[RMDB]
RNA sequence: GGGAACGACUCGAGUAGAGUCGAAAAGAUAUGGACUCGCUUGUGGGAGAUAAACCAUCGGAAACGAUGGCACUAUCGAGGAUCACACUGGCGAGUCCUAAGUCAAACUUACCGUUCGCGGUAAGAAUCCUUCGAUAAACUUCGGUUUAUCGAAGGAAAAAGAAACAACAACAACAAC
Reactivity to DMS in 0.01 (KOAc 150mM, MgCl2 10mM, bicine 150mM(pH8.5), 24C), signal-to-noise 3, nucleotides 027 to 126: g000a040u000a140u010g010g010a010c000u000c000g030c000u000u010g020u000g010g000g010a180g000a010u000a010a160a300c000c000a010u000c010g000g000a050a050a090c000g010a000u000g010g000c100a020c300u000a020u000c000g020a170g020g010a170u010c060a090c000a010c160u000g000g020c000g010a010g020u000c000c000u000a000a060g000u000c010a080a100a300c000u000u000a000c000c000g010u000u010c250g010c050g010g000u020a010a000g000a230a140
Reactivity to 2A3 in 0.01 (KOAc 150mM, MgCl2 10mM, bicine 150mM(pH8.5), 24C), signal-to-noise 2, nucleotides 027 to 126: g010a000u030a020u080g000g000a000c010u000c010g000c020u030u040g000u030g040g130g130a300g000a090u020a030a090a030c020c000a010u010c000g030g000a030a010a010c000g000a000u010g000g000c020a070c180u050a010u020c030g110a220g050g250a150u300c050a020c000a000c110u030g040g020c000g040a000g000u020c000c010u010a000a000g000u010c000a000a060a060c010u030u020a000c020c020g010u060u090c300g020c000g060g000u000a000a010g000a000a120